[RMDB]
Chemical mapping of a 177-nucleotide RNA with 2A3 and DMS. The DMS profile rests on 1,277 reads. For 2A3 the reverse transcriptase was SuperScript II with manganese. The reactions ran in a buffer of 150 mM KOAc, 10 mM MgCl2 and 150 mM bicine (pH 8.5), at 24 C. The data come from the RNA Mapping Database (RMDB), library OK2TST.
RNA sequence: GGGAACGACUCGAGUAGAGUCGAAAAUCAGGCGCUGACUGACCUGUGCCAUGUCGACGCGACCCUGGACCUGCGGUCGCAGCAGGUUCAUCGCCUUGCCCAUGUCCUGCGGACCCUGGGCGCCGCACGUGAAAAUAGGCUUCGGCCUAUUUUCACGAAAAGAAACAACAACAACAAC
Reactivity to 2A3 in 0.01 (KOAc 150mM, MgCl2 10mM, bicine 150mM(pH8.5), 24C), signal-to-noise 2, nucleotides 027 to 126: u090c000a000g000g030c020g000c090u030g080a060c080u100g070a000c000c000u000g020u000g110c070c030a170u220g150u210c100g000a110c120g010c000g020a030c040c020c000u040g070g200a220c040c070u060g010c100g020g020u070c000g020c070a000g010c000a000g020g000u000u000c000a000u020c000g000c010c000u020u130g020c040c000c000a140u150g070u100c040c080u110g020c060g000g040a050c050c010c050u150g080g050g000c040g020c030c000g030c010a030
Reactivity to DMS in 0.01 (KOAc 150mM, MgCl2 10mM, bicine 150mM(pH8.5), 24C), signal-to-noise 2, nucleotides 027 to 126: u000c120a050g000g000c020g020c130u020g020a210c300u000g000a060c030c050u020g000u010g050c090c090a030u000g010u010c080g010a090c130g000c020g000a020c020c020c050u010g000g020a140c200c120u000g010c100g030g010u010c050g020c030a180g010c010a000g000g000u000u000c010a010u000c030g020c020c000u000u020g010c020c020c030a220u000g000u010c050c070u000g020c010g010g000a110c030c070c080u000g000g000g020c040g000c040c010g010c030a180